[RMDB]
RNA sequence: GGGAACGACUCGAGUAGAGUCGAAAAAGAAAAGAAAGUUCCGGUGAUGUUGUAACGUUCAGGCGGUGAACAUAGUCUGGGAAAACGAGUUAAAGAAGCAAGGGACGUUUCGUAUUUCCGUCGAGGAGUUAACUGAUCUUUUCGAAGAUCAGUUAACAAAAGAAACAACAACAACAAC
Reactivity to 2A3 in 0.01 (KOAc 150mM, MgCl2 10mM, bicine 150mM(pH8.5), 24C), signal-to-noise 4, nucleotides 027 to 126: a010g060a000a040a010a000g130a040a090a010g010u000u000c000c010g030g030u070g000a070u040g020u060u040g060u060a070a020c070g010u040u050c080a020g050g020c020g000g060u060g030a020a000c010a020u080a030g040u000c030u050g050g000g020a040a120a010a020c040g000a030g080u120u110a120a090a050g040a070a000g000c040a020a110g000g000g010a010c050g030u010u030u070c020g000u030a160u010u030u000c030c020g040u060c040g060a100g050g030a070
Reactivity to DMS in 0.01 (KOAc 150mM, MgCl2 10mM, bicine 150mM(pH8.5), 24C), signal-to-noise 7, nucleotides 027 to 126: a060g000a110a050a080a080g000a060a070a110g010u010u000c010c010g010g020u010g000a090u000g010u010u010g000u000a060a060c100g010u000u000c050a090g010g000c030g020g010u010g020a070a060c090a070u010a090g010u010c020u000g000g000g000a050a070a070a060c070g000a090g000u010u010a040a090a080g010a090a090g000c050a040a070g000g000g010a060c060g000u010u010u000c030g000u010a110u020u000u000c000c020g010u020c080g010a110g000g020a210
The data come from the RNA Mapping Database (RMDB), libraries RFM100 and RFMREP. Chemical mapping of a 177-nucleotide RNA with 2A3 and DMS. The reactions ran in a buffer of 150 mM KOAc, 10 mM MgCl2 and 150 mM bicine (pH 8.5), at 24 C. For 2A3 the reverse transcriptase was SuperScript II with manganese.